[RMDB]
RNA sequence: GGGAACGACUCGAGUAGAGUCGAAAAAGAACUGCAAACGAUAAUAAUCUCUAUGUGGGUGCACCAGCUUUAGCUGCUGCUUAAUCCAACGAGGAUUGAAGGUGUGACGGGCAACAGACCCGGAAAACAUACGUCACGUCUUCGGACGUGACGUAUGAAAAGAAACAACAACAACAAC
Reactivity to DMS in 0.01 (KOAc 150mM, MgCl2 10mM, bicine 150mM(pH8.5), 24C), signal-to-noise 3, nucleotides 027 to 126: a060g000a090a080c090u000g000c080a030a090a120c070g020a100u010a040a090u000a020a080u000c010u020c040u010a090u040g030u040g030g000g000u000g000c030a060c170c000a050g000c040u000u040u030a100g040c030u010g000c300u010g000c000u000u040a140a020u010c020c010a050a070c070g000a100g010g010a040u000u010g000a110a050g010g000u020g000u000g010a090c030g000g000g030c070a110a070c230a050g010a090c010c000c000g000g000a050a040a060a120
Reactivity to 2A3 in 0.01 (KOAc 150mM, MgCl2 10mM, bicine 150mM(pH8.5), 24C), signal-to-noise 3, nucleotides 027 to 126: a000g180a080a030c050u130g030c080a030a010a050c050g040a010u050a190a020u080a020a040u100c030u010c020u020a060u180g090u040g030g000g060u010g030c010a050c040c000a080g040c040u290u140u090a050g020c010u040g000c000u000g000c000u050u210a080a050u080c040c000a020a070c050g030a020g020g000a000u040u130g050a070a020g120g000u080g030u030g090a000c010g000g020g010c030a140a010c040a230g120a300c010c000c000g010g030a010a060a000a000